Chemical mapping of a 177-nucleotide RNA with DMS and 2A3. 2A3 adducts were read by reverse transcription with SuperScript II with manganese. For DMS the reverse transcriptase was MarathonRT. The 2A3 profile rests on 1,436 reads.

RNA sequence: GGGAACGACUCGAGUAGAGUCGAAAAGCCUUACGAUUCGUCGUAAGGCAUACAAAGUUUUGGCACUAUGAGCCCGCAGCGUUGGUGGUCCCACGCGGUGCAAUACGACGGAUUUCGAUCCGUCGAACCGCGCUAACGAUUUCGAUCGUUAGCGCGGAAAAGAAACAACAACAACAAC
Reactivity to DMS in 0.01 (KOAc 150mM, MgCl2 10mM, bicine 150mM(pH8.5), 24C), signal-to-noise 1, nucleotides 027 to 126: g010c000c000u020u000a000c010g010a020u000u000c200g050u000c000g020u000a000a010g000g000c020a000u010a030c200a070a020a170g010u020u000u000u000g010g020c000a050c090u000a090u000g010a100g030c000c010c070g000c060a140g020c030g000u010u020g010g000u020g000g000u010c060c030c020a090c010g020c030g000g010u000g040c090a140a010u000a160c000g020a010c000g000g020a020u000u000u000c190g000a010u000c010c000g000u000c010g060a050a020
Reactivity to 2A3 in 0.01 (KOAc 150mM, MgCl2 10mM, bicine 150mM(pH8.5), 24C), signal-to-noise 1, nucleotides 027 to 126: g000c010c000u010u020a020c010g020a010u010u050c120g050u000c010g000u110a000a000g010g000c010a010u080a010c000a010a110a040g010u010u050u130u260g080g010c010a010c050u120a120u170g040a030g000c000c010c030g020c000a070g010c020g050u080u120g030g000u070g030g090u110c000c000c000a000c050g020c020g000g000u030g020c020a020a110u190a110c010g010a000c000g000g000a000u010u040u130c140g070a000u000c010c010g000u010c000g030a000a010
Source: RMDB library M2PK50, as collected in RNAgym.